[RMDB]
RNA sequence: GGGAACGACUCGAGUAGAGUCGAAAAGAUGACUUCCAGGAGUGUUAUGCAAUGCACUCUGCGAAAGAGCAUGCGCAUUGUCGCGAGGGAAGUGAAGCUGUGUAGCACUUACCUUUGUCAUGGAAGAGAUAGUUGUGGAGUUCGCUCCAUAGCUAUCAAAAGAAACAACAACAACAAC
Reactivity to DMS in 0.01 (KOAc 150mM, MgCl2 10mM, bicine 150mM(pH8.5), 24C), signal-to-noise 9, nucleotides 027 to 126: g010a090u020g010a090c010u000u000c030c040a130g010g010a060g010u010g010u010u020a040u020g020c080a060a070u020g000c020a090c010u000c040u000g000c130g010a050a090a070g000a110g020c100a100u030g010c100g010c010a090u020u020g010u020c050g010c030g010a040g010g010g010a060a030g010u000g010a090a080g010c090u020g010u010g010u020a070g010c000a020c010u000u010a080c020c010u000u010u020g000u000c050a070u000g000g010a070a050g010a150
Reactivity to 2A3 in 0.01 (KOAc 150mM, MgCl2 10mM, bicine 150mM(pH8.5), 24C), signal-to-noise 9, nucleotides 027 to 126: g140a050u130g020a020c010u030u000c020c010a010g030g030a040g020u050g030u080u100a060u120g050c040a040a040u090g010c010a010c020u000c040u030g010c030g090a120a090a030g100a030g010c060a070u210g050c050g000c080a090u040u170g150u170c020g000c020g040a040g020g030g020a060a040g030u050g080a050a020g040c100u060g020u040g060u230a010g020c000a000c010u030u140a210c010c000u050u070u090g060u050c040a070u050g030g040a040a020g050a020